[RMDB]
The record gives the reactivity of an RNA of 177 nucleotides to DMS and 2A3.

RNA sequence: GGGAACGACUCGAGUAGAGUCGAAAACUAGACGGGUUCGCCCGUCUAGAAACGGAGCGAAUAGGGGGCUUCGCCUCCGGCCCAGCCCUUCCGCUGAGCCCCAAAGCUCAACCUUCGGGUUGAGCAACGUGUAAUAUCCGUUCGCGGAUAUUACACGAAAAGAAACAACAACAACAAC
Reactivity to DMS in 0.01 (KOAc 150mM, MgCl2 10mM, bicine 150mM(pH8.5), 24C), signal-to-noise 3, nucleotides 027 to 126: c010u000a010g000a030c010g000g010g020u000u010c220g000c000c000c000g020u000c000u000a010g000a030a090a130c030g000g000a070g020c060g000a080a070u010a120g000g000g030g000g000c300u000u000c120g020c080c020u000c000c010g030g000c020c020c030a100g020c050c070c110u000u000c040c060g000c060u000g000a070g000c010c000c010c050a120a100a160g000c000u000c000a010a010c000c000u000u020c180g020g000g020u000u000g000a010g010c000a010a010
Reactivity to 2A3 in 0.01 (KOAc 150mM, MgCl2 10mM, bicine 150mM(pH8.5), 24C), signal-to-noise 1, nucleotides 027 to 126: c000u000a000g000a030c010g000g010g000u030u090c180g060c070c000c000g010u010c000u000a000g000a000a000a000c020g000g020a010g090c020g040a070a030u140a300g060g000g000g000g030c000u020u020c000g030c010c020u000c000c000g040g000c030c000c000a040g020c020c000c000u110u050c060c030g030c160u090g090a040g030c000c010c010c040a060a110a000g000c000u010c000a000a000c010c000u020u030c240g130g000g020u000u000g000a000g000c000a000a010
For DMS, 2,365 sequencing reads were counted.